[RMDB]
RNA sequence: GGGAACGACUCGAGUAGAGUCGAAAAGCGGGGCUUGAAACGCGGGUAGCGCGCACGCCCGGCGAAGAAGUUCGCAUACGCGGUGUGCUGGUGCCGAAGUCUCUGCUGCAACGGCACGCUCGACACCUAGAACAUACCGUAUUCGUACGGUAUGUAAUGAGAUUCUACCUUUCGAGGUAGAAUCUCAAAAAGAAACAACAACAACAAC
Reactivity to 2A3 in 0.01 (KOAc 150mM, MgCl2 10mM, bicine 150mM(pH8.5), 24C), signal-to-noise 2, nucleotides 027 to 156: g010c070g000g000g010g000c030u060u070g010a120a160a000c080g020c120g090g000g000u110a070g090c040g020c010g000c020a000c010g000c000c000c000g010g020c000g010a030a000g050a060a020g180u020u000c000g000c040a050u070a300c040g010c130g020g000u010g020u020g010c050u040g050g070u050g000c020c000g030a040a010g030u050c000u010c070u230g010c000u020g000c040a130a000c020g000g020c000a000c050g010c000u000c000g000a010c000a010c020c010u050a080g080a150a000c000a010u000a000c000c000g020u010a000u000u050c180g060u010a000c000g000g020u000a000u000g010u010a000a080

Chemical mapping of a 207-nucleotide RNA with 2A3. Conditions: 150 mM KOAc, 10 mM MgCl2 and 150 mM bicine (pH 8.5), 24 C. 2A3 adducts were read by reverse transcription with SuperScript II with manganese. The data come from the RNA Mapping Database (RMDB), library M2RFOK. Values cover nucleotides 27 to 156.